[RMDB]
RNA sequence: GGGAACGACUCGAGUAGAGUCGAAAACGCUGGGUACAUGCGUUGGACAUGCUGGUACUGAAGCGCGCACGGUACACAGCAACAGCCAACGCCGCUGUACCUGUGCUGAAGCGCGCACGGCAACCGAAAGGUGCGAAAACGCCCUGUUCGCAGGGCGGUACUUAUAUAGCUUCGGCUAUAUAAGUACAAAAGAAACAACAACAACAAC
Reactivity to DMS in 0.01 (KOAc 150mM, MgCl2 10mM, bicine 150mM(pH8.5), 24C), signal-to-noise 3, nucleotides 027 to 156: c060g020c000u000g000g010g030u020a040c010a020u010g000c000g020u010u000g030g020a050c080a140u000g030c010u000g010g040u000a030c010u000g000a060a070g030c020g010c020g070c020a300c020g000g010u000a020c010a120c030a040g000c000a070a090c080a100g000c000c010a050a080c020g020c010c030g030c000u010g010u000a010c030c000u000g040u000g040c000u010g010a090a100g020c050g000c000g030c000a240c070g020g000c010a100a090c030c010g000a090a140a200g000g000u000g000c010g000a080a050a120a260c030g000c000c010c000u000g010u000u010c240g020c010a010g010g100g070c000g000
Reactivity to 2A3 in 0.01 (KOAc 150mM, MgCl2 10mM, bicine 150mM(pH8.5), 24C), signal-to-noise 8, nucleotides 027 to 156: c050g010c020u040g010g000g000u010a010c010a020u210g010c010g000u000u010g000g000a100c070a150u170g000c000u000g000g000u000a000c000u010g040a240a080g020c010g000c010g000c020a020c010g030g000u040a000c300a010c000a070g000c020a040a120c070a050g020c000c000a000a000c000g000c000c000g000c000u000g000u010a000c000c000u000g000u060g000c050u140g040a100a030g020c010g010c010g000c020a020c040g070g020c050a130a150c030c000g060a090a060a020g030g000u030g010c050g020a090a050a020a030c010g000c000c000c000u020g020u070u090c240g000c110a000g000g000g000c000g010
Structure probing data (DMS and 2A3) for a 207-nucleotide construct. The data come from the RNA Mapping Database (RMDB), library RNAMAK. DMS adducts were read by reverse transcription with MarathonRT. Conditions: 150 mM KOAc, 10 mM MgCl2 and 150 mM bicine (pH 8.5), 24 C.